[RMDB]
Structure probing data (2A3 and DMS) for a 177-nucleotide construct. 2A3 adducts were read by reverse transcription with SuperScript II with manganese. Conditions: 150 mM KOAc, 10 mM MgCl2 and 150 mM bicine (pH 8.5), 24 C. For DMS, 2,566 sequencing reads were counted. Source: RMDB library OK2TST, as collected in RNAgym.

RNA sequence: GGGAACGACUCGAGUAGAGUCGAAAAGAUGUGACCGCUUUUGGUAUCUAUAUGGGUGUCUGGUUCCCGACGGUGCCGCACUGGAUUUGGGUACUGAGCGUGGUGCUGAUCAUUUGCGCCGUAAACCGGAUUUGUACCUUUUCGAAGGUACAAAUCCAAAAGAAACAACAACAACAAC
Reactivity to 2A3 in 0.01 (KOAc 150mM, MgCl2 10mM, bicine 150mM(pH8.5), 24C), signal-to-noise 2, nucleotides 027 to 126: g020a030u060g050u110g270a030c050c050g070c020u120u090u030u130g040g000u020a080u110c060u040a050u010a090u250g120g010g010u050g020u010c110u150g100g000u040u000c040c000c020g020a060c060g000g000u010g040c020c040g000c030a030c030u040g120g120a120u050u040u130g050g000g000u040a040c020u010g020a010g080c060g030u130g000g000u030g030c050u040g040a090u070c010a050u060u140u020g090c080g060c000c060g050u090a080a020a040c070c010
Reactivity to DMS in 0.01 (KOAc 150mM, MgCl2 10mM, bicine 150mM(pH8.5), 24C), signal-to-noise 2, nucleotides 027 to 126: g000a050u000g020u010g010a050c050c060g000c060u020u000u000u010g010g010u000a090u000c020u010a050u000a120u000g010g010g010u000g000u010c070u020g020g000u000u000c030c000c040g020a090c110g000g010u000g030c050c060g000c050a060c060u000g020g020a090u000u000u010g010g000g020u000a020c040u000g020a050g020c190g010u000g010g010u010g010c040u000g000a060u000c070a140u000u010u000g020c070g010c020c020g000u010a070a090a080c180c110